This 177-nucleotide RNA was probed chemically with 2A3 and DMS. The reactions ran in a buffer of 150 mM KOAc, 10 mM MgCl2 and 150 mM bicine (pH 8.5), at 24 C.
RNA sequence: GGGAACGACUCGAGUAGAGUCGAAAAGGUGACUGAACUUCUGAGGUCUGGGCUGGACAAUGUUCACAAAAUGCAAAUGCCUUUGUGGGUCCCUUGUGCAUAACAGGGAGAGGAUUUGCCAAAUGGACCAACCAAUAUACUUCGGUAUAUUGGUUGGAAAAGAAACAACAACAACAAC
Reactivity to 2A3 in 0.01 (KOAc 150mM, MgCl2 10mM, bicine 150mM(pH8.5), 24C), signal-to-noise 4, nucleotides 027 to 126: g020g020u050g030a040c050u040g020a080a080c020u080u070c030u090g040a030g030g010u030c040u050g050g010g000c030u040g030g000a020c030a080a150u140g020u090u070c070a060c030a080a100a050a060u150g020c000a050a030a100u210g160c010c000u050u030u080g120u110g080g040g020u060c020c020c000u010u080g010u000g010c050a050u090a250a030c000a020g020g000g000a030g000a000g020g000a030u000u020u060g030c030c040a040a070a090u090g020g030a020
Reactivity to DMS in 0.01 (KOAc 150mM, MgCl2 10mM, bicine 150mM(pH8.5), 24C), signal-to-noise 6, nucleotides 027 to 126: g010g010u000g010a090c080u000g010a110a090c060u000u000c050u010g000a100g010g000u010c040u000g010g010g010c030u000g000g010a060c090a070a060u000g000u010u000c020a070c100a060a050a090a100u010g010c040a040a030a050u010g010c010c030u010u010u010g040u000g000g000g000u010c040c010c010u000u000g040u000g010c300a060u010a070a030c040a030g000g010g010a090g010a040g010g010a100u000u000u000g000c010c210a070a080a100u010g000g000a290

It was measured as part of the RMDB library OK2TRN. Reactivities are given for positions 27 through 126. For 2A3, 5,323 sequencing reads were counted. For 2A3 the reverse transcriptase was SuperScript II with manganese.